[RMDB]
RNA sequence: GGGAACGACUCGAGUAGAGUCGAAAAUUACAAAUUUUUCUAGAGCUUGUGAAGUAGCAGACGCAACCGGUAAAGAAAACAUUUCAAUGACCCACUCUACCAUUGAAAUGGGUGCAGAACUAUUAGACCUCCCACUCAUAUUCGUAUGAGUGGGAGGAAAAGAAACAACAACAACAAC
Reactivity to 2A3 in 0.01 (KOAc 150mM, MgCl2 10mM, bicine 150mM(pH8.5), 24C), signal-to-noise 2, nucleotides 027 to 126: u080u010a050c070a000a050a050u030u060u000u070u020c050u130a120g010a030g060c060u110u020g030u020g080a180a000g050u050a010g020c060a020g030a050c040g020c020a000a150c000c000g100g110u200a110a080a000g050a000a010a020a050c000a000u010u010u020c000a000a010u020g050a100c030c040c060a050c040u030c000u100a090c070c000a000u020u040g000a000a010a000u020g000g040g040u040g000c030a010g040a180a100c060u020a090u240u070a090g080a110
Reactivity to DMS in 0.01 (KOAc 150mM, MgCl2 10mM, bicine 150mM(pH8.5), 24C), signal-to-noise 1, nucleotides 027 to 126: u000u050a190c120a180a060a090u000u010u000u020u000c010u000a120g000a020g000c100u000u030g000u020g000a050a230g000u030a090g020c100a090g000a200c000g030c010a110a070c090c060g000g010u010a070a080a040g000a120a000a110a140c040a010u000u000u020c000a000a010u000g000a110c140c090c000a080c050u050c020u000a020c060c040a030u010u000g020a020a020a000u040g000g000g010u050g000c180a120g000a110a000c030u000a050u000u000a050g000a190